Structure probing data (2A3 and DMS) for a 177-nucleotide construct.
RNA sequence: GGGAACGACUCGAGUAGAGUCGAAAAUCUUCAUCGGUCAGCCUUCUGAGUUCCUCUUCUUCCUCCUUGCUGAGGAUCUUUCCUCCCGCGGAGAGCUGCUUCUUCUUGUUCUCGAGGGCCUUCCUUCCGGUAAGUGAAAGUUCGCUUUCACUUACCGAAAAGAAACAACAACAACAAC
Reactivity to 2A3 in 0.01 (KOAc 150mM, MgCl2 10mM, bicine 150mM(pH8.5), 24C), signal-to-noise 1, nucleotides 027 to 126: u050c010u160u040c020a060u050c040g050g000u030c020a010g020c030c000u110u010c030u070g060a060g060u070u000c020c000u000c050u070u010c020u060u000c020c010u040c000c000u060u040g020c060u040g040a000g000g000a020u020c060u030u110u030c000c020u020c000c000c000g020c030g040g000a040g010a000g020c060u030g020c010u010u000c010u040u010c010u030u050g050u100u020c010u000c010g000a030g010g050g020c000c020u020u040c000c000u070u050c010
Reactivity to DMS in 0.01 (KOAc 150mM, MgCl2 10mM, bicine 150mM(pH8.5), 24C), signal-to-noise 1, nucleotides 027 to 126: u000c030u010u000c070a050u000c090g000g020u010c060a120g020c050c040u000u010c050u010g010a150g000u010u000c020c040u010c050u000u010c050u010u000c020c010u010c030c030u000u000g020c120u010g010a050g010g000a050u000c060u000u000u000c010c020u000c000c040c040g020c170g000g000a070g030a070g000c090u000g000c080u010u010c020u010u000c010u010u000g010u000u000c000u010c030g000a070g000g000g010c090c080u000u000c010c000u000u000c050

Conditions: 150 mM KOAc, 10 mM MgCl2 and 150 mM bicine (pH 8.5), 24 C. For DMS the reverse transcriptase was MarathonRT.